[RMDB]
RNA sequence: GGGAACGACUCGAGUAGAGUCGAAAAAGUAUCAAUCACCUGAGCUCACCAUAGUCUAAUAGAAAACAACCGAAACCAAAUAAUUCAAGCACUGCUUAUUACAAUUUUACUGGGUCUCUAUUUUACCCAUAUCUGAUUGGUUCGCCAAUCAGAUAUGAAAAGAAACAACAACAACAAC
Reactivity to DMS in 0.01 (KOAc 150mM, MgCl2 10mM, bicine 150mM(pH8.5), 24C), signal-to-noise 3, nucleotides 027 to 126: a080g000u000a050u000c060a090a120u010c050a030c010c040u010g010a110g000c040u010c060a050c010c030a040u010a060g010u000c040u000a080a080u020a110g000a070a060a080a110c060a050a060c020c040g010a060a070a080c120c060a060a060a070u010a050a060u000u010c070a060a050g010c040a050c130u000g000c020u010u000a040u000u010a070c050a050a050u000u000u010u010a070c120u010g000g000g000u000c040u000c060u000a050u000u000u000u000a100c040c030
Reactivity to 2A3 in 0.01 (KOAc 150mM, MgCl2 10mM, bicine 150mM(pH8.5), 24C), signal-to-noise 3, nucleotides 027 to 126: a000g120u060a050u100c030a090a010u020c000a060c050c010u040g020a020g060c010u010c030a030c000c010a050u030a050g030u000c030u040a110a120u040a210g120a080a100a040a010c020a020a010c030c030g070a080a010a000c030c020a120a090a030u110a030a060u160u190c050a060a000g030c010a020c290u130g000c040u040u100a030u110u070a120c020a090a080u050u090u170u160a070c060u070g030g060g030u010c010u000c010u020a120u080u100u110u080a040c020c000
An RNA of 177 nucleotides, treated with DMS and 2A3 and read out base by base.
2A3 is a SHAPE reagent: it acylates the 2'-hydroxyl of flexible nucleotides of all four kinds.
2A3 adducts were read by reverse transcription with SuperScript II with manganese.